[RMDB]
An RNA of 177 nucleotides, treated with 2A3 and read out base by base. Reactivities are given for positions 27 through 126.
RNA sequence: GGGAACGACUCGAGUAGAGUCGAAAAUAUCCAAUUUCAGAUUUUGGUAAUAAUAUUGAAAAUUUUUCUUCUAAUUGUUUUGCUAAAUAAUUGGUAUUUGACAUUUGAUUAUUUUCUAUAUUACCAGGAUCGUAUAUGGGUUCGCCCAUAUACGAUCAAAAGAAACAACAACAACAAC
Reactivity to 2A3 in 0.01 (KOAc 150mM, MgCl2 10mM, bicine 150mM(pH8.5), 24C), signal-to-noise 2, nucleotides 027 to 126: u240a050u020c020c000a040a090u060u200u290c090a030g050a140u110u170u230u260g000g000u030a020a040u050a070a010u090a110u190u170g010a020a010a020a040u090u190u060u120u020c020u090u090c050u080a110a070u090u020g020u030u020u020u020g110c030u120a130a020a070u180a100a300u250u080g020g030u060a100u120u100u240g050a010c010a040u040u070u110g030a020u010u080a000u000u030u010u000c000u000a020u000a000u020u050a000c000c000a050g000

2A3 adducts were read by reverse transcription with SuperScript II with manganese.
It was measured as part of the RMDB library OK1LIB.